[RMDB]
RNA sequence: GGGAACGACUCGAGUAGAGUCGAAAAUCGAUCACAUGAUGCAUAGGUACGGAUCACAUGCUACGUACUAGGAUCUAGCUAUACAUGUCUCAUGCGAUCACCAUGAUGUAUCUAGCAUGCUAGACUAACUCUUACGCAGCUUCGGCUGCGUAAGAGUAAAAGAAACAACAACAACAAC
Reactivity to DMS in 0.01 (KOAc 150mM, MgCl2 10mM, bicine 150mM(pH8.5), 24C), signal-to-noise 2, nucleotides 027 to 126: u010c200g000a060u000c020a080c010a010u000g020a030u000g000c020a010u000a210g000g030u000a010c020g030g010a030u000c030a200c060a090u000g040c070u010a130c220g050u010a100c080u000a180g010g000a040u000c030u000a070g020c120u000a050u000a130c110a010u000g000u000c100u000c010a050u000g000c010g000a000u010c000a140c050c000a040u010g000a050u000g000u000a160u000c080u000a040g000c040a090u010g000c030u000a070g000a100c180u000a110
Reactivity to 2A3 in 0.01 (KOAc 150mM, MgCl2 10mM, bicine 150mM(pH8.5), 24C), signal-to-noise 2, nucleotides 027 to 126: u120c030g030a010u010c010a000c000a010u020g010a010u060g010c000a030u030a090g030g040u020a010c050g000g010a040u040c020a030c020a230u100g000c040u120a060c200g110u100a100c040u030a040g000g060a010u030c010u010a040g030c100u040a030u000a120c030a020u020g010u020c000u000c020a010u010g000c020g020a000u020c020a020c000c010a050u200g060a070u120g130u090a040u030c030u010a020g030c030a070u160g020c020u020a000g040a060c070u120a050
Conditions: 150 mM KOAc, 10 mM MgCl2 and 150 mM bicine (pH 8.5), 24 C.
The record gives the reactivity of an RNA of 177 nucleotides to DMS and 2A3.
High DMS reactivity at an A or C suggests that its Watson-Crick edge is free.
DMS adducts were read by reverse transcription with MarathonRT.